Chemical mapping of a 177-nucleotide RNA with DMS and 2A3. Conditions: 150 mM KOAc, 10 mM MgCl2 and 150 mM bicine (pH 8.5), 24 C. Source: RMDB library OK2TST, as collected in RNAgym. Reactivities are given for positions 27 through 126.
[RMDB]
RNA sequence: GGGAACGACUCGAGUAGAGUCGAAAACGAAGAGUAUAUCGGCAUUGCACGGACACUGGGCUACGGGCCGAUAGAGACUCUAGUGUAUAUCGUGGUGCCCUUGGCUUGGAGAGGCAUACUCGCUUCCGACCCUAAGGGUGUUCGCACCCUUAGGGUCAAAAGAAACAACAACAACAAC
Reactivity to DMS in 0.01 (KOAc 150mM, MgCl2 10mM, bicine 150mM(pH8.5), 24C), signal-to-noise 2, nucleotides 027 to 126: c060g000a160a100g010a070g010u000a120u000a040u010c050g010g020c010a130u000u010g010c110a060c070g010g000a100c140a100c080u000g010g000g010c030u010a100c150g000g020g000c000c000g000a020u000a020g010a190g000a020c000u000c040u000a080g000u000g020u000a150u000a100u010c050g010u000g010g010u000g000c010c020c030u010u010g010g010c090u000u000g010g010a130g000a090g010g010c020a050u000a070c070u000c040g010c130u010u010c030c050
Reactivity to 2A3 in 0.01 (KOAc 150mM, MgCl2 10mM, bicine 150mM(pH8.5), 24C), signal-to-noise 3, nucleotides 027 to 126: c050g050a030a050g020a000g010u030a020u010a020u160c020g000g030c040a090u020u200g110c060a050c070g010g080a060c070a040c170u120g040g020g030c000u070a040c060g040g130g000c000c010g020a030u030a000g060a010g030a010c000u000c030u050a000g020u020g050u060a100u020a030u240c070g040u050g030g020u050g000c010c000c000u030u020g080g000c050u050u050g070g010a120g000a020g070g030c010a010u080a130c030u020c030g020c050u050u040c030c080